[RMDB]
RNA sequence: GGGAACGACUCGAGUAGAGUCGAAAAGGUUCCUUCGGGAACCAAAAAAGAUAUGGAACUGAAGGUGGUGUCGGAAACGACACCCACUAGUUCAAUUCCUAAGUCAAAAAAGUCUGUUCGCAGACAACUUAUGUGCAUAGUUCGCUAUGCACAUAAGAAAAGAAACAACAACAACAAC
Reactivity to 2A3 in 0.01 (KOAc 150mM, MgCl2 10mM, bicine 150mM(pH8.5), 24C), signal-to-noise 1, nucleotides 027 to 126: g000g000u000u000c000c000u000u050c190g060g020g020a000a020c000c000a120a000a000a040a100a020g040a000u070a030u130g020g000a030a010c010u040g040a040a020g090g030u050g010g000u000g000u000c010g000g000a020a070a040c000g000a000c020a000c000c000c000a010c010u040a050g070u020u030c000a020a050u020u060c010c000u050a120a050g080u080c120a100a090a090a190a020a120g010u020c010u040g090u090u100c300g000c140a010g000a000c000a000a040
Reactivity to DMS in 0.01 (KOAc 150mM, MgCl2 10mM, bicine 150mM(pH8.5), 24C), signal-to-noise 3, nucleotides 027 to 126: g020g010u010u000c010c000u000u020c110g050g030g010a020a010c010c000a000a020a050a080a070a070g000a010u000a300u010g010g000a020a000c020u000g020a020a080g010g010u000g000g010u000g010u000c000g010g000a180a060a160c000g020a000c000a000c080c040c010a000c030u000a070g000u000u000c010a020a030u010u010c000c000u000a070a140g010u020c030a000a070a110a110a100a110g010u000c000u000g010u000u010c150g010c020a030g000a020c030a070a080